[RMDB]
RNA sequence: GGGAACGACUCGAGUAGAGUCGAAAAACCAGGUAUUCGUACCUGGUAAAAAGCGUACUACGAAAGCACGCAUAGUAUCUAGAUCCCAAAUAGGAUCUAGCCGAGCUAUGAACUACGUGUCUUUCGUAUCGCAAAAAGCACAUAUUCGUAUGUGCAAUCGAAAAGCGUGUUUCGACACGCUUUUCGAAAAAGAAACAACAACAACAAC
Reactivity to 2A3 in 0.01 (KOAc 150mM, MgCl2 10mM, bicine 150mM(pH8.5), 24C), signal-to-noise 2, nucleotides 027 to 156: a000c000c000a010g000g000u030a030u030u150c190g020u030a000c010c000u000g010g000u070a070a010a000a020a000g000c030g070u050a110c040u000a000c090g000a000a000a000g010c000a000c000g010c000a000u000a000g010u000a050u050c000u000a000g000a000u030c000c030c020a180a190a040u300a110g020g000a000u020c000u000a000g030c140c140g100a070g000c000u010a020u010g000a090a150c130u110a100c250g000u000g120u110c000u000u000u000c000g000u000a020u000c000g000c010a030a030a030a030a030g000c000a000c000a000u010a010u090u090c210g080u050a000u000g000u000g010c020a000a060
Reactivity to DMS in 0.01 (KOAc 150mM, MgCl2 10mM, bicine 150mM(pH8.5), 24C), signal-to-noise 2, nucleotides 027 to 156: a020c000c000a010g030g010u010a000u000u000c210g030u000a030c000c000u030g030g010u000a000a020a040a090a080g000c020g010u000a110c200u000a030c000g000a030a040a010g010c000a000c000g000c000a070u000a040g040u000a170u000c020u000a010g020a010u000c000c000c040a070a200a150u000a110g000g000a060u000c000u000a010g010c140c080g000a270g050c050u000a090u000g030a160a300c020u000a110c020g000u000g000u020c010u000u010u000c000g000u000a000u000c020g060c030a070a010a060a070a080g020c010a050c000a010u000a080u000u000c260g000u000a000u000g000u000g000c000a050a040
An RNA of 207 nucleotides, treated with 2A3 and DMS and read out base by base. For 2A3 the reverse transcriptase was SuperScript II with manganese. As a SHAPE reagent, 2A3 marks flexible, mostly unpaired nucleotides at the ribose 2'-OH. Reactivities are given for positions 27 through 156. The DMS profile rests on 4,314 reads. The reactions ran in a buffer of 150 mM KOAc, 10 mM MgCl2 and 150 mM bicine (pH 8.5), at 24 C.